[RMDB]
RNA sequence: GGGAACGACUCGAGUAGAGUCGAAAAGAUAUGGACAUGUGGGAGACGAGUGUCGGAAACGACAUGACGUCAUCGAUCACACUAGUCCUAAGUCAAAUCAAGCAUUCUGUUCGCAGAAUGCUUGAAAGAGAAAUUACGUGUUCGCACGUAAUUUCUCAAAAGAAACAACAACAACAAC
Reactivity to DMS in 0.01 (KOAc 150mM, MgCl2 10mM, bicine 150mM(pH8.5), 24C), signal-to-noise 3, nucleotides 027 to 126: g000a010u000a050u020g000g000a020c000a130u010g000u000g000g020g000a010g010a010c000g010a300g000u000g000u000c000g010g000a010a000a030c000g000a010c000a040u000g000a060c040g020u000c010a240u000c150g010a120u010c010a000c000a010c300u010a120g000u000c000c000u000a000a060g020u000c000a080a110a160u000c020a000a000g000c000a020u000u010c000u000g000u000u000c230g020c000a000g000a010a000u000g000c010u000u000g000a000a100a090
Reactivity to 2A3 in 0.01 (KOAc 150mM, MgCl2 10mM, bicine 150mM(pH8.5), 24C), signal-to-noise 2, nucleotides 027 to 126: g010a000u010a010u050g000g010a000c000a000u010g000u010g000g020g010a050g010a000c020g020a060g080u020g000u000c000g010g010a010a000a010c000g000a000c010a020u110g110a140c040g020u000c000a030u270c010g020a000u000c000a000c020a010c090u160a090g010u000c010c000u000a010a000g000u020c020a010a030a240u040c010a010a000g000c000a000u010u000c000u010g040u060u140c270g000c050a000g010a000a000u000g010c000u000u000g000a000a000a000